[RMDB]
RNA sequence: GGGAACGACUCGAGUAGAGUCGAAAAUCAAAAAGGAUGGACCUUGAUAACAAUUGCUGCUCUGAUAUAUGUGGAGACUGAAACCAAUGUACACAGUGUAAUCACUGGUCAAGGUGAUAACCAAGUACAUCUACUCGUUCUUCGGAACGAGUAGAUGAAAAGAAACAACAACAACAAC
Reactivity to DMS in 0.01 (KOAc 150mM, MgCl2 10mM, bicine 150mM(pH8.5), 24C), signal-to-noise 3, nucleotides 027 to 126: u030c060a050a070a060a100a090g000g000a080u000g010g020a090c010c020u000u000g020a030u010a140a070c080a050a050u000u000g000c120u000g010c030u000c040u010g010a130u000a040u010a040u020g030u000g010g000a070g020a130c110u020g030a060a090a080c070c040a050a050u000g010u010a050c130a150c040a030g050u000g000u010a050a070u000c040a030c050u000g020g000u000c040a020a060g010g000u000g000a040u010a090a140c030c010a030a070g000u000a130
Reactivity to 2A3 in 0.01 (KOAc 150mM, MgCl2 10mM, bicine 150mM(pH8.5), 24C), signal-to-noise 3, nucleotides 027 to 126: u070c020a050a010a030a030a000g090g000a040u090g040g020a030c000c000u010u010g040a030u070a080a090c080a110a080u060u060g010c040u030g030c010u040c030u070g100a040u060a050u030a050u280g120u110g080g000a050g030a100c060u190g080a050a030a020c070c010a040a070u060g020u080a020c100a000c000a050g000u000g020u080a080a090u130c010a010c020u020g040g030u020c020a000a030g000g000u000g020a060u020a050a000c010c010a040a000g070u030a030
This 177-nucleotide RNA was probed chemically with DMS and 2A3. For DMS the reverse transcriptase was MarathonRT. Conditions: 150 mM KOAc, 10 mM MgCl2 and 150 mM bicine (pH 8.5), 24 C.